[RMDB]
RNA sequence: GGGAACGACUCGAGUAGAGUCGAAAAGACUAACUUCGGUUAGUCAAAAAACCUUUGUGAUAACCGUUUGACGGGGAGUCGGUAGGUACCCAUUGGGUACUUUCCGACGACGAUCCCGAGGUUAUCACUCUGGUAAAAACGGCCGUUCGCGGCCGAACGAACCAUGAAUGUUCGCAUUCAUGGUUCGAAAAGAAACAACAACAACAAC
Reactivity to 2A3 in 0.01 (KOAc 150mM, MgCl2 10mM, bicine 150mM(pH8.5), 24C), signal-to-noise 1, nucleotides 027 to 156: g000a000c000u000a000a000c000u080u100c170g070g000u000u000a000g000u000c000a200a100a000a000a000a000c020c010u010u010u030g010u000g000a000u000a020a000c010c010g050u070u160u300g170a060c040g000g020g020g010a040g010u000c000g000g010u010a000g000g010u000a000c000c000c110a300u170u300g000g010g000u000a000c000u000u010u000c010c020g000a010c000g010a010c040g020a110u070c000c050c000g020a050g010g000u000u000a000u000c000a000c000u000c000u000g010g030u110a210a090a000a000a000c020g010g010c000c000g020u090u140c300g010c020g070g020c020c010g040a000a040